[RMDB]
RNA sequence: GGGAACGACUCGAGUAGAGUCGAAAAGAGGCUGUUUAUUGGCAGUCCAUGGAUUUAUUCAGGUUCAUUCUUCCUGAGUGUAGACAUGUCUAUCAGGGGUCAUGCAGAUCGAUGAUCAUGCUGCCGAGGGUAGGGUACACUUCGGUGUACCCUACCCAAAAGAAACAACAACAACAAC
Reactivity to 2A3 in 0.01 (KOAc 150mM, MgCl2 10mM, bicine 150mM(pH8.5), 24C), signal-to-noise 2, nucleotides 027 to 126: g060a010g000g020c010u010g070u030u030u150a300u270u270g100g000c010a000g000u090c020c020a000u050g080g030a060u060u260u160a130u080u130c010a000g000g010u080u040c020a040u160u000c020u100u030c000c000u060g010a060g010u190g070u050a040g000a170c000a060u110g000u120c050u050a030u090c000a090g120g000g000g000u050c000a000u070g090c070a100g000a010u020c000g030a020u010g030a030u090c020a080u020g000c000u000g000c020c000g060a060